[RMDB]
RNA sequence: GGGAACGACUCGAGUAGAGUCGAAAAUUGGUGGACAGACCUUCAUUCGGAUUAAACAAACCAUGACAUGGCUCUCGGCUCUGAACUACUGUCGAAACCACUACACAGACCUGGCCGAUCUGCAGAGAGUGACCAACGAGGACAAAGAAACUCUCAAGUGCACUACUAUAUUCGUAUAGUAGUGCACAAAAGAAACAACAACAACAAC
Reactivity to 2A3 in 0.01 (KOAc 150mM, MgCl2 10mM, bicine 150mM(pH8.5), 24C), signal-to-noise 3, nucleotides 027 to 156: u070u040g000g010u030g020g010a030c010a030g050a040c030c000u030u090c050a100u030u100c080g110g000a080u140u180a110a080a070c070a040a080a020c030c010a030u060g030a040c050a090u080g020g020c010u010c010u020c050g000g020c020u010c050u070g040a040a040c030u130a020c050u120g020u010c020g020a120a040a040c040c020a020c050u080a020c060a000c020a020g070a060c020c000u020g010g000c000c010g020a050u010c050u090g000c040a020g020a000g000a010g020u060g040a050c020c000a050a030c040g070a040g030g040a000c020a030a090a030g080a050a070a020c030u060c040u070c080a050a080
Reactivity to DMS in 0.01 (KOAc 150mM, MgCl2 10mM, bicine 150mM(pH8.5), 24C), signal-to-noise 2, nucleotides 027 to 156: u000u030g020g060u010g010g030a120c060a120g000a060c040c020u010u000c040a140u000u000c070g010g000a170u000u000a110a130a170c080a050a090a120c030c020a060u000g020a130c150a260u000g010g030c000u000c020u000c030g040g030c020u030c000u000g000a090a100c020u010a060c020u000g030u000c010g000a040a110a130c020c010a100c080u030a110c140a090c070a070g010a050c030c000u000g000g000c050c080g000a040u000c010u000g000c060a160g000a140g010a080g010u000g010a210c050c010a060a110c040g010a080g000g010a090c080a080a080a140g000a140a080a070c080u000c000u000c020a070a300